[RMDB]
This 177-nucleotide RNA was probed chemically with DMS and 2A3.
For 2A3, 1,079 sequencing reads were counted.
RNA sequence: GGGAACGACUCGAGUAGAGUCGAAAAGUGAAGUGGCUCUUACUAUUGAUAAUUCUGAAAAUCAAUUGGAAUUAGAUUUUACAGAAGUAACUAUAAGAAGAAGGGCUUAUAGAAAUGGUGAAAGUGAAGGGAUAUAAUCGUUCGCGAUUAUAUCCCUAAAAGAAACAACAACAACAAC
Reactivity to DMS in 0.01 (KOAc 150mM, MgCl2 10mM, bicine 150mM(pH8.5), 24C), signal-to-noise 2, nucleotides 027 to 126: g020u010g030a070a090g000u020g000g000c000u020c060u010u000a040c020u000a000u010u000g000a130u050a040a040u010u000c010u000g000a040a020a010a000u000c000a100a020u010u010g020g010a170a090u030u000a170g010a020u000u000u000u000a110c000a000g000a030a020g000u010a090a220c020u000a010u020a050a010g000a070a060g070a100a050g000g020g000c010u000u010a030u000a000g000a080a010a060u010g000g000u000g000a000a040a020g000u000g000a170
Reactivity to 2A3 in 0.01 (KOAc 150mM, MgCl2 10mM, bicine 150mM(pH8.5), 24C), signal-to-noise 2, nucleotides 027 to 126: g080u150g050a060a070g080u150g090g000c000u010c000u000u040a120c010u020a040u100u070g120a090u060a250a120u020u000c020u000g000a020a000a000a000u010c010a010a090u060u160g080g030a040a020u170u090a090g070a060u000u000u000u050a180c040a000g000a020a010g030u040a080a000c040u000a000u070a280a010g110a050a000g000a040a030g080g050g000c000u020u020a040u040a040g090a020a060a010u190g070g000u020g080a200a000a020g020u050g030a070
The reactions ran in a buffer of 150 mM KOAc, 10 mM MgCl2 and 150 mM bicine (pH 8.5), at 24 C.